[RMDB]
RNA sequence: GGGAACGACUCGAGUAGAGUCGAAAAGCAGUCACCGGUCACCGGCUACUGCGCGGCGCCAUCCGCGCGGGCGGGGUUGCGCUGCGUGCGCUGCCCGAUACCGACGAGCUUGCAGCGCUCGCCGUCGCCAUGGCAUGGAGUUCGCUCCAUGCCAUGGAAAAGAAACAACAACAACAAC
Reactivity to DMS in 0.01 (KOAc 150mM, MgCl2 10mM, bicine 150mM(pH8.5), 24C), signal-to-noise 2, nucleotides 027 to 126: g010c010a020g010u000c070a120c020c000g040g000u030c060a140c030c000g010g030c080u000a080c020u020g000c030g010c020g010g010c110g000c060c230a090u060c010c000g010c030g000c030g010g020g000c010g040g010g000g010u030u000g000c060g010c000u010g000c110g010u000g000c040g000c020u000g000c030c020c040g000a140u040a160c140c050g000a050c020g000a060g030c040u020u020g000c090a080g000c110g000c000u000c010g000c010c050g000u040c130g000
Reactivity to 2A3 in 0.01 (KOAc 150mM, MgCl2 10mM, bicine 150mM(pH8.5), 24C), signal-to-noise 6, nucleotides 027 to 126: g020c020a020g030u050c030a020c050c030g030g040u190c080a060c140c020g060g000c040u110a090c020u110g000c000g000c020g020g010c030g010c010c030a070u100c020c010g000c010g010c020g010g050g000c040g010g030g030g030u080u060g030c030g000c040u040g020c050g040u070g020c040g000c010u050g010c020c010c000g050a100u140a190c040c020g050a080c010g010a040g010c030u080u160g010c080a040g020c020g000c030u020c000g000c000c000g070u070c030g000
Chemical mapping of a 177-nucleotide RNA with DMS and 2A3. The 2A3 profile rests on 5,529 reads. Reactivities are given for positions 27 through 126.